[RMDB]
RNA sequence: GGGAACGACUCGAGUAGAGUCGAAAAGAUAUGGACGACGUAAGAGCGCGGAUGUGGUCGGAAACGACCACUGACGAACUACGCUUAUCGUCGUCCUAAGUCAAAGCGUAACGUUCGCGUUACGCAACGUACGUCUUGAGUUCGCUCAAGACGUACGAAAAGAAACAACAACAACAAC
Reactivity to 2A3 in 0.01 (KOAc 150mM, MgCl2 10mM, bicine 150mM(pH8.5), 24C), signal-to-noise 4, nucleotides 027 to 126: g020a010u030a030u110g000g000a000c000g010a000c020g020u070a300a210g030a000g170c160g000c070g080g000a020u060g010u010g000g000u020c010g010g010a030a050a000c010g000a000c010c000a000c000u000g000a010c000g010a110a060c100u210a070c170g000c000u020u030a050u170c000g010u000c000g000u020c000c000u010a030a000g010u000c040a060a070a050g020c010g010u000a000a030c010g010u020u080c300g020c010g090u020u020a000c000g000c000a000a010
Reactivity to DMS in 0.01 (KOAc 150mM, MgCl2 10mM, bicine 150mM(pH8.5), 24C), signal-to-noise 3, nucleotides 027 to 126: g020a040u000a300u000g020g020a010c000g010a000c000g010u020a110a270g010a010g000c030g030c020g020g010a200u000g030u000g010g010u000c010g010g000a060a090a110c010g010a010c000c000a000c000u000g000a300c090g010a100a070c110u010a220c010g000c000u000u010a140u000c010g000u000c010g000u000c010c000u000a000a070g000u000c060a070a080a070g000c000g000u000a000a000c000g000u010u010c240g010c000g020u010u000a000c000g000c010a020a040
Structure probing data (2A3 and DMS) for a 177-nucleotide construct.
The 2A3 profile rests on 9,569 reads.
For 2A3 the reverse transcriptase was SuperScript II with manganese.
DMS adducts were read by reverse transcription with MarathonRT.
The reactions ran in a buffer of 150 mM KOAc, 10 mM MgCl2 and 150 mM bicine (pH 8.5), at 24 C.
The DMS profile rests on 2,847 reads.